Chemical mapping of a 177-nucleotide RNA with 2A3 and DMS.
Reactivities are given for positions 27 through 126.
DMS adducts were read by reverse transcription with MarathonRT.
The RNA was probed in 150 mM KOAc, 10 mM MgCl2 and 150 mM bicine (pH 8.5) at 24 C.
The DMS profile rests on 13,318 reads.
RNA sequence: GGGAACGACUCGAGUAGAGUCGAAAAGCUUCGAUCACUGCAGCACGGAAGCCUUUCUCUUCCAGUACGCGUACCGCUUCAAUGGUGGUGCCUCCCGGUGAGCAGACCAUAUCUUUCAGUGCCCCCGGGCUAAAAAUGAAUUCGUUCAUUUUUAGCCAAAAGAAACAACAACAACAAC
Reactivity to 2A3 in 0.01 (KOAc 150mM, MgCl2 10mM, bicine 150mM(pH8.5), 24C), signal-to-noise 5, nucleotides 027 to 126: g010c010u040u050c040g090a090u080c050a020c090u070g030c050a040g050c030a020c080g090g030a030a010g010c000c000u020u100u010c040u020c000u070u050c040c010a040g040u080a040c070g030c030g060u020a030c010c010g040c050u080u100c090a100a200u240g030g010u020g000g020u010g030c000c010u010c000c010c010g020g040u040g020a030g010c030a010g040a040c010c000a010u010a030u070c020u020u080u070c050a040g040u030g090c010c000c010c020c010g030
Reactivity to DMS in 0.01 (KOAc 150mM, MgCl2 10mM, bicine 150mM(pH8.5), 24C), signal-to-noise 8, nucleotides 027 to 126: g000c030u000u000c040g010a130u010c050a080c060u000g020c080a090g020c060a090c110g010g000a060a040g000c070c040u000u000u000c040u000c030u010u010c030c040a100g020u000a050c140g020c110g010u000a030c030c020g010c030u000u010c220a070a100u000g010g030u000g010g000u000g000c030c030u000c040c010c020g010g020u000g000a090g020c060a060g010a160c010c020a030u000a040u000c020u000u000u000c050a090g010u000g000c040c020c010c080c120g020